[RMDB]
RNA sequence: GGGAACGACUCGAGUAGAGUCGAAAAGAUAUGGACAUAAGCAACAGCUCCCGGUCGGAAACGACCGUGGAGACAUGCUUGGGUCCUAAGUCAAACGAAGAAGUUCGGUUCGCCGAACUUCUUCGAAGAUAAACAUACACUUCGGUGUAUGUUUAUCAAAAGAAACAACAACAACAAC
Reactivity to 2A3 in 0.01 (KOAc 150mM, MgCl2 10mM, bicine 150mM(pH8.5), 24C), signal-to-noise 3, nucleotides 027 to 126: g020a010u040a010u090g000g010a000c010a020u030a020a000g010c020a000a180c070a300g050c010u000c020c000c000g000g000u000c000g000g030a100a020a010c010g010a000c000c020g040u160g000g010a000g030a030c020a010u010g000c000u010u010g060g000g000u000c000c000u000a030a010g010u020c030a090a050a110c020g000a000a000g000a010a000g000u020u020c010g000g050u060u150c300g040c080c000g000a000a000c000u000u000c000u000u000c000g000a000a000
Reactivity to DMS in 0.01 (KOAc 150mM, MgCl2 10mM, bicine 150mM(pH8.5), 24C), signal-to-noise 5, nucleotides 027 to 126: g010a030u000a160u010g000g000a020c000a050u000a010a000g010c000a030a120c260a180g010c000u000c000c010c000g000g000u000c000g000g000a040a060a130c010g010a000c000c000g030u010g020g000a010g010a050c130a100u000g000c000u000u000g000g000g020u000c000c000u000a020a090g000u000c020a110a130a300c020g000a000a000g010a010a000g000u000u000c000g010g010u000u010c220g020c000c000g000a010a000c000u000u000c000u000u000c000g000a040a050